The record gives the reactivity of an RNA of 177 nucleotides to DMS and 2A3.
In probing experiments dimethyl sulfate is read out at A N1 and C N3, which are open when not base-paired.
DMS adducts were read by reverse transcription with MarathonRT.

[RMDB]
RNA sequence: GGGAACGACUCGAGUAGAGUCGAAAAGUGCGGAUUGAAAUUCAUGGGAGCCUCUCCAUAAUGGAUGAACGCCGCGUUAGUGCGCGCAGUCGCGACGUAAACGCUCUGUCUUCCCGUUCAGGCCUCACGUAGGUAAUGACUUCGGUCAUUACCUACGAAAAGAAACAACAACAACAAC
Reactivity to DMS in 0.01 (KOAc 150mM, MgCl2 10mM, bicine 150mM(pH8.5), 24C), signal-to-noise 3, nucleotides 027 to 126: g020u000g020c020g010g010a110u010u010g020a110a140a030u000u000c030a020u000g020g000g000a040g010c160c070u020c100u000c000c000a080u020a090a040u000g000g010a020u010g000a110a090c140g010c030c020g030c020g000u000u000a150g020u000g000c060g000c080g000c090a090g010u020c060g020c010g000a030c040g000u010a050a080a100c050g000c010u010c030u010g000u000c110u010u000c010c010c010g010u000u000c100a080g000g000c030c070u010c070a230
Reactivity to 2A3 in 0.01 (KOAc 150mM, MgCl2 10mM, bicine 150mM(pH8.5), 24C), signal-to-noise 2, nucleotides 027 to 126: g080u070g020c020g000g050a160u050u140g060a220a090a000u060u000c050a030u030g000g030g030a040g070c040c040u100c000u040c040c010a060u150a240a090u160g020g020a010u040g020a090a040c040g010c050c010g020c020g000u050u080a070g030u030g140c050g000c000g040c070a030g100u190c050g000c010g060a050c020g020u040a140a060a000c020g000c010u030c020u060g030u010c010u020u000c020c010c000g020u080u060c040a040g000g130c030c000u050c030a090